An RNA of 207 nucleotides, treated with 2A3 and DMS and read out base by base.
RNA sequence: GGGAACGACUCGAGUAGAGUCGAAAAGUCGCUUGGUUCGCCAAGCGACAAAAAGCGUACUACUCGAGACAUGUAGACUGACUAAUCCCAAAUAGGAUUAGCAAUGGUUCACAACAGCUCGAGUAUCGCAAAAAAGCAAUGCUUUCGAGCAUUGCAACAACCUGUUCGUAUUCGUACGAACAGGUUGAAAAGAAACAACAACAACAAC
Reactivity to 2A3 in 0.01 (KOAc 150mM, MgCl2 10mM, bicine 150mM(pH8.5), 24C), signal-to-noise 2, nucleotides 027 to 156: g020u020c000g000c000u010u000g050g030u100u080c100g090c080c000a010a000g010c000g000a000c000a000a000a000a000a010g030c040g030u110a110c030u000a000c000u010c000g030a010g100a100c030a020u040g000u010a040g000a040c040u130g070a030c000u010a000a000u030c000c060c000a040a100a060u290a070g000g000a000u000u010a000g020c000a020a130u230g100g000u190u210c050a010c010a060a150c000a100g030c000u000c000g010a040g000u020a020u050c010g000c000a000a000a000a000a000a190g020c020a000a000u000g000c000u050u120u280c300g080a000g000c020a000u000u050g000c020a000a010
Reactivity to DMS in 0.01 (KOAc 150mM, MgCl2 10mM, bicine 150mM(pH8.5), 24C), signal-to-noise 1, nucleotides 027 to 156: g040u010c000g120c000u020u010g000g000u000u010c300g040c060c000a000a050g000c000g000a000c000a000a010a080a090a100g000c010g020u000a040c130u000a000c030u000c000g000a010g000a060c080a300u010g000u000a020g030a070c000u000g000a170c000u000a000a000u000c010c000c000a080a120a210u010a060g010g000a030u000u000a030g010c010a100a090u000g000g030u020u000c020a030c040a050a100c090a170g020c010u000c010g010a060g000u000a030u010c000g020c030a000a060a100a100a080a180g030c000a000a010u000g000c000u000u010u030c270g020a060g000c030a040u000u000g020c010a100a080
Background
DMS adducts were read by reverse transcription with MarathonRT.